[RMDB]
RNA sequence: GGGAACGACUCGAGUAGAGUCGAAAAGAUAUGGAGGAGAACUACGUCGGUGUGGUAUCUCGGAAACGAGCCGAGCCACAGCGACGCUCCUCCUAAGUCAAAACGGUGCUUCUUCGGAAGCACCGAACUAUGGUCGUAUCUUCGGAUACGACCAUAGAAAAGAAACAACAACAACAAC
Reactivity to 2A3 in 0.01 (KOAc 150mM, MgCl2 10mM, bicine 150mM(pH8.5), 24C), signal-to-noise 2, nucleotides 027 to 126: g040a030u080a030u150g030g000a000g050g020a020g000a120a090c140u150a080c300g020u010c010g070g300u010g010u020g020g030u090a220u140c020u000c030g030g030a220a300a060c170g030a080g110c040c000g030a000g000c000c010a010c020a030g120c000g000a000c020g000c000u020c000c000u010c000c000u000a000a000g010u020c010a000a000a070a140c030g020g000u000g000c000u000u000c010u040u100c240g090g000a000a000g000c010a000c000c000g000a000a000
Reactivity to DMS in 0.01 (KOAc 150mM, MgCl2 10mM, bicine 150mM(pH8.5), 24C), signal-to-noise 2, nucleotides 027 to 126: g010a010u000a300u000g000g020a030g000g000a060g020a110a030c170u020a300c010g020u010c010g030g000u000g000u020g010g000u000a080u000c000u000c010g000g020a100a080a110c170g010a080g000c260c110g010a100g000c020c010a020c010a010g020c000g020a020c020g010c000u000c000c010u020c000c010u000a020a030g000u000c080a030a070a060a200c040g000g000u000g000c020u000u000c010u000u010c230g000g030a020a070g000c000a000c000c000g010a000a020